Annotation: Chemical mapping of a 207-nucleotide RNA with DMS and 2A3. For DMS, 3,067 sequencing reads were counted. The RNA was probed in 150 mM KOAc, 10 mM MgCl2 and 150 mM bicine (pH 8.5) at 24 C. 2A3 adducts were read by reverse transcription with SuperScript II with manganese. It was measured as part of the RMDB library OK3TST.
RNA sequence: GGGAACGACUCGAGUAGAGUCGAAAAAACCGGCGGAGUGCACUGGCUGGCCAUGGCGUGGCAGCCUCGGAGUCGGACGUUUUAUCUCUUUGACCCCUUUGGGUUUUCCGACUCUAAGCUAGAGCAACUGUACGGGUUUGAGUACGAAGGGCUGCUCACCCUGUACGAUAUUCGUAUCGUACAGGGUAAAAGAAACAACAACAACAAC
Reactivity to DMS in 0.01 (KOAc 150mM, MgCl2 10mM, bicine 150mM(pH8.5), 24C), signal-to-noise 1, nucleotides 027 to 156: a050a030c020c000g020g010c050g000g040a050g000u010g010c020a120c060u000g030g000c000u010g020g010c020c030a100u010g000g080c130g010u020g020g070c050a090g020c010c000u020c070g030g000a070g010u000c000g020g020a050c300g000u000u010u000u000a080u010c100u010c060u010u000u000g000a080c010c010c010c210u000u000u000g010g020g040u000u000u000u000c010c020g020a040c010u000c000u000a020a070g010c040u010a080g010a140g010c060a080a070c000u000g030u000a050c040g030g000g010u000u000u020g000a160g000u000a060c080g010a120a080g010g030g020c040u000g020c020u000c070
Reactivity to 2A3 in 0.01 (KOAc 150mM, MgCl2 10mM, bicine 150mM(pH8.5), 24C), signal-to-noise 2, nucleotides 027 to 156: a000a000c020c000g020g020c020g010g010a190g090u070g000c030a020c100u060g020g030c020u040g050g060c000c020a080u140g140g080c080g040u050g000g000c020a020g030c000c000u000c020g000g000a010g010u000c000g000g010a030c030g000u020u050u170u150a150u080c110u020c000u170u060u130g050a060c010c000c020c010u070u110u200g040g000g000u040u020u090u030c010c000g010a000c000u000c010u010a000a010g020c080u100a040g010a020g050c020a040a010c050u070g030u200a060c030g040g010g010u030u100u130g020a030g020u040a030c050g020a070a020g000g040g030c030u050g030c010u000c010
Values cover nucleotides 27 to 156.